RNA sequence: GGGAACGACUCGAGUAGAGUCGAAAAGCACGUCGUUACGACGACGUGCAAGAAAACAAAAGGAGUGGUGAUGCCGGACCACAAUGAAUCAAACUGGCAAAAAGCAUGGUGGUACGCCACCAUGCAAUAGUAUAUAGCUGUUCGCAGCUAUAUACUAAAAAGAAACAACAACAACAAC
Reactivity to DMS in 0.01 (KOAc 150mM, MgCl2 10mM, bicine 150mM(pH8.5), 24C), signal-to-noise 5, nucleotides 027 to 126: g000c000a010c010g040u000c000g000u000u000a130c180g040a100c010g010a010c020g010u000g040c000a020a020g000a140a080a150a090c210a080a080a180a130g020g010a140g000u000g000g010u030g000a040u010g010c000c000g000g000a050c030c000a000c000a060a090u030g010a120a100u020c110a010a030a090c020u000g000g000c010a040a080a080a100a080g010c000a010u010g020g020u010g010g010u030a070c290g000c010c010a010c010c000a020u010g000c000a020a010
Reactivity to 2A3 in 0.01 (KOAc 150mM, MgCl2 10mM, bicine 150mM(pH8.5), 24C), signal-to-noise 9, nucleotides 027 to 126: g010c000a000c000g000u000c000g010u020u070a100c300g030a000c000g000a000c000g060u000g020c000a000a010g000a000a060a010a010c160a020a100a050a030g190g070a200g030u010g010g010u040g020a110u060g020c000c000g000g010a010c010c000a000c020a020a160u230g050a020a010u100c040a040a020a050c010u030g000g000c010a030a040a020a030a000g000c000a000u000g000g000u010g010g010u030a030c250g070c040c000a000c000c000a000u000g000c000a000a000
The record gives the reactivity of an RNA of 177 nucleotides to DMS and 2A3.
Values cover nucleotides 27 to 126.
For DMS the reverse transcriptase was MarathonRT.
Source: RMDB library OK1LIB, as collected in RNAgym.
The reactions ran in a buffer of 150 mM KOAc, 10 mM MgCl2 and 150 mM bicine (pH 8.5), at 24 C.
For 2A3, 34,638 sequencing reads were counted.
The DMS profile rests on 12,174 reads.